Chemical mapping of a 177-nucleotide RNA with DMS and 2A3. For DMS, 879 sequencing reads were counted. The RNA was probed in 150 mM KOAc, 10 mM MgCl2 and 150 mM bicine (pH 8.5) at 24 C. DMS adducts were read by reverse transcription with MarathonRT.
[RMDB]
RNA sequence: GGGAACGACUCGAGUAGAGUCGAAAAGUAAUGUAUUACAAGGAAGACUAAAUAGAUCAGAUAAUUCAUGCAGACUUGAUGUUAAUAGUCAGAUUUUAGUUGGUGUAGGUGCACCUGCAAAUUCCUGGUACGAUCCGGUAUUCGUACCGGAUCGUACAAAAGAAACAACAACAACAAC
Reactivity to DMS in 0.01 (KOAc 150mM, MgCl2 10mM, bicine 150mM(pH8.5), 24C), signal-to-noise 1, nucleotides 027 to 126: g030u010a050a060u010g020u000a070u030u000a090c090a080a070g010g010a150a040g020a030c020u010a030a040a180u010a200g000a030u000c050a040g020a080u020a070a080u000u000c100a080u000g010c110a100g000a090c200u000u000g010a010u000g010u000u010a030a110u010a110g020u000c010a060g010a110u020u000u000u000a060g000u000u000g010g020u050g010u010a120g010g030u010g000c030a000c000c020u000g040c100a090a040a090u000u000c000c000u010g000
Reactivity to 2A3 in 0.01 (KOAc 150mM, MgCl2 10mM, bicine 150mM(pH8.5), 24C), signal-to-noise 1, nucleotides 027 to 126: g050u040a020a100u120g100u100a100u090u070a010c040a000a000g020g000a010a040g050a010c030u110a000a000a180u170a180g080a070u030c040a000g090a030u010a030a220u140u060c030a010u150g170c010a030g030a270c000u090u120g000a010u050g060u120u050a080a000u020a150g020u000c000a010g030a090u030u080u000u200a010g000u050u030g060g010u010g020u030a020g100g020u140g040c010a010c000c010u000g010c060a120a000a000u080u070c040c000u040g120
Overview:
It was measured as part of the RMDB library OK2TST. Values cover nucleotides 27 to 126.